[RMDB]
RNA sequence: GGGAACGACUCGAGUAGAGUCGAAAACAUCAGCAAAUGCAGCUGAUUCCAUAGACAUACCUGUAAUCCCCCCGGGUAUUGGUGUUAGGGUGUUUGUAGAUGAUUAUGCCAAAGGACUAUCAGUAUAGCUGCAUAAAAUAUUCGUAUUUUAUGCAGCAAAAGAAACAACAACAACAAC
Reactivity to 2A3 in 0.01 (KOAc 150mM, MgCl2 10mM, bicine 150mM(pH8.5), 24C), signal-to-noise 2, nucleotides 027 to 126: c040a000u030c000a010g000c030a010a060a120u230g040c020a120g160c000u000g000a010u040u080c010c010a060u140a070g100a070c040a050u020a040c000c000u070g120u210a170a300u130c000c000c000c000c010c020g000g000g040u020a020u030u070g030g000u030g010u050u050a050g070g000g010u020g000u000u060u070g010u020a050g000a040u060g010a020u130u110a040u130g050c030c000a060a050a010g130g000a030c060u000a110u180c050a000g080u030a050u100a180
Reactivity to DMS in 0.01 (KOAc 150mM, MgCl2 10mM, bicine 150mM(pH8.5), 24C), signal-to-noise 8, nucleotides 027 to 126: c090a040u000c010a250g010c010a050a040a060u000g010c090a110g030c010u000g010a030u010u000c020c020a110u010a090g010a110c190a110u000a010c020c010u010g000u010a120a160u020c010c000c000c040c090c050g010g010g010u000a020u000u000g010g010u000g000u000u000a050g010g010g020u000g000u000u000u000g010u000a080g010a040u000g000a100u000u010a070u010g010c020c030a040a080a100g000g010a070c100u000a070u000c070a060g010u000a100u010a140
An RNA of 177 nucleotides, treated with 2A3 and DMS and read out base by base. The DMS profile rests on 12,989 reads. The data come from the RNA Mapping Database (RMDB), library OK2TRN. 2A3 adducts were read by reverse transcription with SuperScript II with manganese.